[RMDB]
RNA sequence: GGGAACGACUCGAGUAGAGUCGAAAAGAUAUGGAAUUAAAUCACUGGCCAAUUGUGACAUGCGUAGGUGUCGGAAACGACACCGCGCAACAGCACACGGUUGGCCAGUGAUUUAAUUCCUAAGUCACAUAAGUCUAAGCUUCGGCUUAGACUUAUGAAAAGAAACAACAACAACAAC
Reactivity to DMS in 0.01 (KOAc 150mM, MgCl2 10mM, bicine 150mM(pH8.5), 24C), signal-to-noise 2, nucleotides 027 to 126: g000a030u000a300u010g000g010a020a000u010u000a000a010a010u000c000a020c020u000g020g000c000c010a000a020u010u010g000u000g030a300c040a180u010g000c020g040u000a050g140g020u000g000u000c000g020g000a120a100a270c000g000a010c000a000c000c010g020c000g020c000a010a030c260a160g020c180a090c010a000c070g030g000u000u000g000g000c000c000a000g000u000g000a000u000u010u010a000a000u000u000c010c010u010a010a060g030u010c050a300